[RMDB]
RNA sequence: GGGAACGACUCGAGUAGAGUCGAAAAGCACUGCAUCUAAAGGUCAAACAUUCUGUUGGUAAGCAUUGGCAAGAUGAUAAUACCGAUGAAAAGUUGCAGGACCAUUUAAAAGCAUGUAUUGCCAAGAAAAUAAUAAUGGAUUCGUCCAUUAUUAUUUAAAAGAAACAACAACAACAAC
Reactivity to DMS in 0.01 (KOAc 150mM, MgCl2 10mM, bicine 150mM(pH8.5), 24C), signal-to-noise 9, nucleotides 027 to 126: g020c040a050c060u000g000c010a050u010c060u010a040a060a090g000g010u010c090a150a070a080c030a090u010u000c040u010g020u030u010g000g010u010a030a110g010c040a050u000u000g000g020c150a080a100g000a020u000g000a050u020a070a100u020a030c000c000g010a080u010g000a030a020a080a230g010u000u010g000c130a080g000g000a090c020c000a110u010u010u020a040a050a080a080g000c070a020u000g010u000a050u010u000g000c010c060a070a100g010a100
Reactivity to 2A3 in 0.01 (KOAc 150mM, MgCl2 10mM, bicine 150mM(pH8.5), 24C), signal-to-noise 9, nucleotides 027 to 126: g030c020a010c050u010g000c000a010u000c020u110a160a080a070g040g010u030c040a060a070a030c010a060u080u050c040u090g050u050u040g020g030u060a090a050g080c040a060u010u050g080g010c040a040a050g020a040u020g010a000u040a120a030u020a080c010c020g040a050u090g090a050a030a030a060g020u030u020g020c020a010g010g060a010c000c000a020u060u150u160a090a140a020a010g030c040a040u080g030u130a060u050u080g000c010c010a040a010g070a060
An RNA of 177 nucleotides, treated with DMS and 2A3 and read out base by base. Values cover nucleotides 27 to 126. For DMS, 46,668 sequencing reads were counted. As a SHAPE reagent, 2A3 marks flexible, mostly unpaired nucleotides at the ribose 2'-OH. The reactions ran in a buffer of 150 mM KOAc, 10 mM MgCl2 and 150 mM bicine (pH 8.5), at 24 C. For DMS the reverse transcriptase was MarathonRT.